[RMDB]
RNA sequence: GGGAACGACUCGAGUAGAGUCGAAAAGUCUGUGCAUCACAUGUAACCCUAGUGCCUACAGAGGUAAGGAGAGGGCUUUGGAGCCCCAGAAAUUGGAGUUAUAAGUGCUUAUAAACUAACAUGUAGGUGCACCUAGAUAUUUCGAUAUCUAGGUGCAAAAAGAAACAACAACAACAAC
Reactivity to 2A3 in 0.01 (KOAc 150mM, MgCl2 10mM, bicine 150mM(pH8.5), 24C), signal-to-noise 2, nucleotides 027 to 126: g040u000c040u010g040u010g010c000a080u040c010a050c010a080u050g020u070a100a070c010c000c000u040a070g050u020g190c000c000u030a050c020a060g080a050g140g000u030a020a060g040g020a080g070a040g020g010g000c020u090u080u070g210g100a060g020c000c000c020c000a000g090a020a170a000u090u090g030g020a100g040u010u070a090u020a150a050g040u070g070c000u110u040a080u130a150a060a010c020u050a000a060c020a050u040g020u050a030g020g040
Reactivity to DMS in 0.01 (KOAc 150mM, MgCl2 10mM, bicine 150mM(pH8.5), 24C), signal-to-noise 4, nucleotides 027 to 126: g010u010c020u010g000u010g010c120a140u010c070a030c020a070u010g000u000a100a120c030c010c010u010a100g030u010g030c010c000u000a060c040a050g010a160g010g010u010a070a080g010g010a140g010a100g010g000g010c010u000u000u010g020g010a140g020c010c000c000c020a030g000a040a120a180u000u000g010g000a050g010u000u000a080u000a050a030g020u000g000c010u000u000a090u010a090a070a110c040u010a060a070c040a110u000g020u000a020g000g010